Structure probing data (2A3 and DMS) for a 177-nucleotide construct.
Source: RMDB library OK1LIB, as collected in RNAgym.
For 2A3 the reverse transcriptase was SuperScript II with manganese.
The reactions ran in a buffer of 150 mM KOAc, 10 mM MgCl2 and 150 mM bicine (pH 8.5), at 24 C.
Values cover nucleotides 27 to 126.
For 2A3, 4,795 sequencing reads were counted.
The DMS profile rests on 3,714 reads.
For DMS the reverse transcriptase was MarathonRT.

[RMDB]
RNA sequence: GGGAACGACUCGAGUAGAGUCGAAAAUUCAACAAGCAACUCCAAAUGUUGACUAGAGUGAACUUAUUUUGCUGCAAGGCUGUGCUUUUCACUCAUCCGUUAAAUUCGCCGAUUUUUUUCAGCAAAAAGUAUCAGCUAGUUUCGACUAGCUGAUACUAAAAGAAACAACAACAACAAC
Reactivity to 2A3 in 0.01 (KOAc 150mM, MgCl2 10mM, bicine 150mM(pH8.5), 24C), signal-to-noise 5, nucleotides 027 to 126: u060u020c010a020a010c010a040a060g080c040a060a070c020u090c120c070a070a090a110u150g000u010u030g090a140c050u060a040g010a020g110u020g010a040a020c030u070u050a070u110u160u060u080g010c010u020g000c030a000a130g030g000c040u060g040u070g070c020u050u070u030u020c030a010c020u020c020a060u010c010c020g030u040u110a040a070a080u070u050c040g000c010c000g020a070u070u040u000u000u030u020u130c020a020g000c020a010a050a050a020
Reactivity to DMS in 0.01 (KOAc 150mM, MgCl2 10mM, bicine 150mM(pH8.5), 24C), signal-to-noise 3, nucleotides 027 to 126: u000u010c010a030a100c120a090a150g000c070a080a050c090u000c060c100a070a110a060u020g020u000u000g010a050c130u000a110g000a060g030u010g000a050a120c180u000u010a090u000u010u000u010g000c010u000g000c290a120a080g000g000c020u020g030u010g010c070u000u020u000u010c040a050c030u000c030a120u000c020c050g010u010u000a030a050a140u020u030c060g020c020c000g010a000u000u000u010u010u050u000u040c030a020g010c060a030a010a020a010